[RMDB]
RNA sequence: GGGAACGACUCGAGUAGAGUCGAAAAGAGAUAACUAGAUAGGAAAAGGAACUGCAGAACCUAGAACUAGAAAGUUACUCAGGAAGAGACCAGAAGGGUGAAAGUUUAAGGUAGCUCAGUCGACAAUGUGGACUUAGAAGUUCGCUUCUAAGUCCACAAAAGAAACAACAACAACAAC
Reactivity to DMS in 0.01 (KOAc 150mM, MgCl2 10mM, bicine 150mM(pH8.5), 24C), signal-to-noise 1, nucleotides 027 to 126: g050a020g000a010u000a020a000c000u010a040g010a300u000a010g000g000a030a070a070a040g050g000a040a020c060u000g070c220a150g010a090a300c000c000u000a050g000a300a150c000u000a000g000a240a200a040g030u050u000a000c000u000c040a120g000g000a040a160g040a080g000a040c050c010a020g000a090a020g010g000g050u000g020a050a040a040g000u060u000u000a020a000g000g000u080a100g020c020u030c000a000g000u000c010g000a070c110a050a030u010
Reactivity to 2A3 in 0.01 (KOAc 150mM, MgCl2 10mM, bicine 150mM(pH8.5), 24C), signal-to-noise 1, nucleotides 027 to 126: g030a000g020a120u000a030a010c040u030a050g040a220u030a030g000g000a020a000a000a180g000g090a080a030c010u090g030c100a010g010a060a080c000c000u040a010g020a000a030c000u010a070g050a050a140a000g020u070u010a000c040u000c000a000g000g040a030a140g010a000g000a050c000c000a000g050a040a110g100g000g000u040g050a000a150a130g040u140u250u180a000a040g070g000u000a000g010c000u000c040a080g020u050c060g030a070c000a030a020u090
Structure probing data (DMS and 2A3) for a 177-nucleotide construct. For 2A3, 552 sequencing reads were counted. Conditions: 150 mM KOAc, 10 mM MgCl2 and 150 mM bicine (pH 8.5), 24 C. For DMS the reverse transcriptase was MarathonRT. Reactivities are given for positions 27 through 126. High DMS reactivity at an A or C suggests that its Watson-Crick edge is free.